RNA sequence: GGGAACGACUCGAGUAGAGUCGAAAAGCUGCGUGAAACCUCGCUGUUUUCUUGGCUAACUUUCAGCGAGGUGAGGCAAGGCGGCAAAAAAAAGUUGGGAGCAGCAACGGCAAGUAAAAAAAAAGUUACAAGUUGCGAUGGUUCGCCAUCGCAACAAUCUAUAUCGAUUGUUCGCAAUCGAUAUAGAAAAAGAAACAACAACAACAAC
Reactivity to 2A3 in 0.01 (KOAc 150mM, MgCl2 10mM, bicine 150mM(pH8.5), 24C), signal-to-noise 3, nucleotides 027 to 156: g000c000u030g000c010g100u090g050a090a030a030c010c010u000c000g010c030u000g000u010u010u020u020c090u140u260g110g000c060u020a020a010c010u010u010u000c000a000g010c000g010a010g000g000u010g000a010g010g020c050a040a040g060g000c020g000g000c040a090a040a050a010a000a000a030a100g060u080u030g010g020g000a050g030c010a000g000c010a030a010c050g050g000c040a050a090g060u180a100a010a010a060a000a000a000a000a000g010u010u010a030c030a080a070g000u000u010g010c000g000a000u000g000g060u030u050c140g000c080c000a000u010c000g000c000a000a000c000a000a000
Reactivity to DMS in 0.01 (KOAc 150mM, MgCl2 10mM, bicine 150mM(pH8.5), 24C), signal-to-noise 1, nucleotides 027 to 156: g040c030u000g040c020g000u000g000a120a160a090c000c000u000c000g010c010u020g030u000u000u000u000c010u000u010g040g030c110u000a010a040c010u000u000u010c020a070g060c040g010a020g050g030u000g000a020g000g000c080a070a120g020g020c050g030g000c030a000a000a010a050a090a060a050a130g060u000u000g000g000g020a210g000c020a050g010c040a060a090c010g000g000c050a070a150g010u060a000a000a000a000a030a100a070a030a070g000u000u010a040c020a080a130g010u010u000g010c020g000a050u000g010g040u000u000c300g030c000c000a020u000c000g020c000a000a000c000a020a040